[RMDB]
RNA sequence: GGGAACGACUCGAGUAGAGUCGAAAAACCUGAUGAUUCGUCAUCAGGUCACAUGCCGCCCGAACGGCUACCUGACCGGGCGGAUUCACUUUAAAUGGAGCACUGCUGCAUCAUUCGUGAUGCAGAAGUCACACGGUGACUUCGGUCACCGUGUGACAAAAGAAACAACAACAACAAC
Reactivity to DMS in 0.01 (KOAc 150mM, MgCl2 10mM, bicine 150mM(pH8.5), 24C), signal-to-noise 1, nucleotides 027 to 126: a020c010c000u000g020a000u000g010a030u010u020c230g020u000c000a020u000c000a000g010g000u010c050a090c180a080u030g000c000c000g000c000c010c020g020a030a230c030g000g020c020u010a020c020c000u000g020a130c120c000g010g030g000c000g000g000a020u000u000c090a050c160u000u010u000a080a140a140u030g000g000a060g000c080a150c090u000g000c020u000g000c010a000u000c000a000u010u010c210g020u000g000a040u000g000c010a000g010a050a080

Record summary:
An RNA of 177 nucleotides, treated with DMS and read out base by base. Source: RMDB library M2PK50, as collected in RNAgym. The reactions ran in a buffer of 150 mM KOAc, 10 mM MgCl2 and 150 mM bicine (pH 8.5), at 24 C.